[RMDB]
Chemical mapping of a 177-nucleotide RNA with 2A3 and DMS. Conditions: 150 mM KOAc, 10 mM MgCl2 and 150 mM bicine (pH 8.5), 24 C. For DMS, 3,924 sequencing reads were counted. Values cover nucleotides 27 to 126. 2A3 adducts were read by reverse transcription with SuperScript II with manganese. The data come from the RNA Mapping Database (RMDB), library VIROID.

RNA sequence: GGGAACGACUCGAGUAGAGUCGAAAACCCCCAGGAAUGGCGGGACCCCACUCUGCAGGGUCCGCGUACCAUCCUUUCUUACCUGAUGGCCGGCAUGGUCCCAGCCUCCUCGCUGGCGCCGGCUGGGCUGUAGAAAAGAGUUCGCUCUUUUCUACAGAAAAGAAACAACAACAACAAC
Reactivity to 2A3 in 0.01 (KOAc 150mM, MgCl2 10mM, bicine 150mM(pH8.5), 24C), signal-to-noise 2, nucleotides 027 to 126: c000c000c000c010c010a010g030g000a160a110u030g000g010c000g020g000g010a000c000c030c040c000a040c120u300c140u190g000c080a060g010g020g000u000c000c020g090c010g000u040a090c000c000a040u040c000c010u030u110u020c050u070u130a190c010c030u020g180a180u230g170g000c000c000g000g010c050a070u160g140g050u130c000c010c000a000g010c010c030u160c030c020u080c090g000c000u000g000g040c020g000c000c000g070g070c000u000g000g000g000
Reactivity to DMS in 0.01 (KOAc 150mM, MgCl2 10mM, bicine 150mM(pH8.5), 24C), signal-to-noise 4, nucleotides 027 to 126: c050c020c000c130c120a030g000g000a090a020u000g010g000c010g000g000g000a020c010c000c000c050a150c140u010c120u000g010c100a130g010g000g010u000c000c010g000c040g020u000a070c020c010a020u000c020c010u010u000u010c050u020u000a140c090c070u010g010a110u010g010g000c010c000g000g000c000a190u010g020g000u020c240c000c010a030g010c010c080u010c130c080u000c170g010c000u000g000g000c100g000c030c010g020g000c000u000g010g010g020